[RMDB]
RNA sequence: GGGAACGACUCGAGUAGAGUCGAAAACAUGCGACGCGUAGUGUCUGGCGCGGCGGAUGGGAAAGCAUGCAGCCAUCCGAAACGUACGAUCGUAUACGUACGGAAACCAUCCGAAGCUCCACGGGCAUGCGAAAGGAUGGACGUCUCAAUCAGAUGGGUUAGUGUCUAUUUUCGAAUAGACACUAACAAAAGAAACAACAACAACAAC
Reactivity to DMS in 0.01 (KOAc 150mM, MgCl2 10mM, bicine 150mM(pH8.5), 24C), signal-to-noise 3, nucleotides 027 to 156: c050a050u000g030c020g020a040c050g010c020g030u000a120g040u010g020u000c030u000g000g010c020g030c020g000g030c000g010g020a050u000g010g000g010a080a070a140g000c040a070u010g000c070a170g020c020c020a060u010c010c010g010a060a060a060c010g030u000a000c010g010a220u010c210g020u000a220u000a060c020g020u010a120c010g020g000a020a140a130c000c020a040u000c010c030g020a120a160g000c070u020c030c020a080c060g020g010g000c030a060u000g020c030g010a080a060a190g010g010a070u000g020g010a030c040g030u000c040u000c070a060a140u020c090a070g030a060u000g000g010
Reactivity to 2A3 in 0.01 (KOAc 150mM, MgCl2 10mM, bicine 150mM(pH8.5), 24C), signal-to-noise 8, nucleotides 027 to 156: c030a030u100g050c030g040a030c030g030c010g010u080a070g110u060g030u080c050u030g040g000c030g000c010g030g020c000g000g020a010u010g010g000g030a070a090a030g050c050a040u190g030c050a010g020c020c000a030u020c010c020g040a090a080a010c000g000u020a010c010g030a110u150c080g040u220a060u050a150c010g010u010a000c000g000g020a080a060a010c000c000a000u000c000c000g010a030a020g020c020u050c070c030a110c110g030g010g010c030a030u070g010c010g050a120a040a010g020g000a010u030g000g020a030c030g070u010c020u010c050a090a170u070c020a050g080a150u140g130g030

The record gives the reactivity of an RNA of 207 nucleotides to DMS and 2A3. The 2A3 profile rests on 8,644 reads. The RNA was probed in 150 mM KOAc, 10 mM MgCl2 and 150 mM bicine (pH 8.5) at 24 C. For DMS the reverse transcriptase was MarathonRT.